[RMDB]
Chemical mapping of a 177-nucleotide RNA with 2A3 and DMS.

RNA sequence: GGGAACGACUCGAGUAGAGUCGAAAAAGCUUCCCGGAGUCGACCUUCCUGCUGGCUGCUCUGUGACCGCUUCCCGGCUCUGCCCUCUUGGCCGAAGUGCCCGCUGCCGGGCGCGGGCCUCAGGUCGAAAGGUAACUGGGUUCGCCCAGUUACCUUUAAAAGAAACAACAACAACAAC
Reactivity to 2A3 in 0.01 (KOAc 150mM, MgCl2 10mM, bicine 150mM(pH8.5), 24C), signal-to-noise 2, nucleotides 027 to 126: a010g040c090u060u020c010c000c010g000g000a000g010u020c000g020a170c000c010u010u020c000c000u100g070c030u010g040g000c020u040g010c010u030c020u030g130u040g030a110c020c060g000c020u060u050c000c000c000g000g030c050u050c020u070g040c000c000c000u170c030u180u100g020g000c000c040g070a100a030g010u070g130c000c010c000g040c090u090g030c030c040g050g010g000c010g000c000g010g000g000c000c000u040c050a020g040g020u010c050g040
Reactivity to DMS in 0.01 (KOAc 150mM, MgCl2 10mM, bicine 150mM(pH8.5), 24C), signal-to-noise 2, nucleotides 027 to 126: a110g010c140u010u010c010c020c010g000g000a050g000u000c000g020a110c080c010u000u000c030c040u000g020c060u000g010g000c040u010g000c000u010c040u000g010u000g000a080c110c020g000c060u000u020c000c020c040g000g030c000u030c040u000g000c020c020c010u000c030u030u000g000g010c000c030g000a200a120g040u020g000c030c000c050g020c060u010g000c100c000g000g030g000c300g030c000g020g010g010c030c030u000c140a100g040g000u050c020g010

The 2A3 profile rests on 904 reads.